[RMDB]
RNA sequence: GGGAACGACUCGAGUAGAGUCGAAAAACCUUUGUGACAAUGUAAACAAUAGGCAAGCUAUGUAAGCGAUCCCAUUGGGAUCGUAUCAUAGUGAUGACCCUAUUGGAAGAAGUUGUCACUCUGGUAAAAGAAGGCUAGUGUUCGCACUAGCCUUCAACUACUCCCAGAUGUUCGCAUCUGGGAGUAGAAAAGAAACAACAACAACAAC
Reactivity to 2A3 in 0.01 (KOAc 150mM, MgCl2 10mM, bicine 150mM(pH8.5), 24C), signal-to-noise 3, nucleotides 027 to 156: a000c000c000u030u010u000g000u000g000a000c000a010a020u050g000u000a010a000a000c000a020a000u010a000g030g000c030a030a100g000c010u000a010u020g040u110a300a240g020c010g010a000u000c010c010c100a280u220u300g010g010g000a000u000c000g000u020a020u040c000a000u000a010g050u030g040a070u090g030a010c030c000c000u000a000u000u000g010g010a100a080g000a010a000g010u000u010g000u000c000a000c000u000c000u000g010g000u020a010a030a020a110g010a000a000g030g010c010u000a000g010u010g040u080u120c300g060c110a000c000u000a000g010c000c000u000u010c010a000a000
Reactivity to DMS in 0.01 (KOAc 150mM, MgCl2 10mM, bicine 150mM(pH8.5), 24C), signal-to-noise 1, nucleotides 027 to 156: a040c000c000u020u020u020g000u030g010a040c030a000a010u000g000u000a060a200a300c030a000a030u000a000g040g000c000a060a180g000c000u000a000u000g020u010a120a300g000c030g010a030u000c000c010c030a300u030u000g120g040g070a010u000c000g010u000a000u000c020a000u000a000g020u010g010a050u000g000a100c300c030c000u000a020u000u000g000g000a000a200g010a190a300g000u000u000g000u000c000a040c010u030c040u000g000g020u000a050a010a220a120g000a040a000g010g070c000u000a030g070u000g040u000u000c300g000c040a000c000u000a000g000c000c060u000u000c000a000a050